[RMDB]
An RNA of 177 nucleotides, treated with DMS and 2A3 and read out base by base. For 2A3 the reverse transcriptase was SuperScript II with manganese. The reactions ran in a buffer of 150 mM KOAc, 10 mM MgCl2 and 150 mM bicine (pH 8.5), at 24 C.

RNA sequence: GGGAACGACUCGAGUAGAGUCGAAAAGAGUAAGGCGGCCACAGCAGAAUCGUUCAUGUCGCAGCCGCUGUCAGAUUCUGGUGAAUCUGCGAAUUCUGCUGAAGAGCACGGAAUAGGACCGUGCAAACCACGUAAUAGGGUUCGCCCUAUUACGUGGAAAAGAAACAACAACAACAAC
Reactivity to DMS in 0.01 (KOAc 150mM, MgCl2 10mM, bicine 150mM(pH8.5), 24C), signal-to-noise 5, nucleotides 027 to 126: g000a100g010u020a080a080g010g030c030g000g000c020c270a120c030a010g000c020a010g010a030a030u020c050g000u000u020c190a100u020g010u040c060g000c080a140g030c020c010g030c010u000g000u040c040a010g000a020u000u000c000u030g000g030u040g000a020a000u000c020u010g010c050g010a060a020u010u000c000u000g000c000u010g020a250a100g010a220g000c010a010c000g010g010a120a160u020a110g000g020a120c000c010g020u000g010c010a030a060a130
Reactivity to 2A3 in 0.01 (KOAc 150mM, MgCl2 10mM, bicine 150mM(pH8.5), 24C), signal-to-noise 9, nucleotides 027 to 126: g110a010g100u190a120a070g050g010c010g000g000c030c040a100c020a040g000c000a000g010a010a020u050c050g080u130u140c150a120u240g110u140c060g010c080a020g000c010c000g010c010u000g020u000c000a000g000a030u020u000c020u240g170g040u300g070a010a010u000c000u000g000c000g010a010a030u020u000c000u000g000c000u010g030a060a020g040a020g060c000a000c010g000g040a080a080u180a170g070g080a060c000c000g000u000g000c000a010a020a000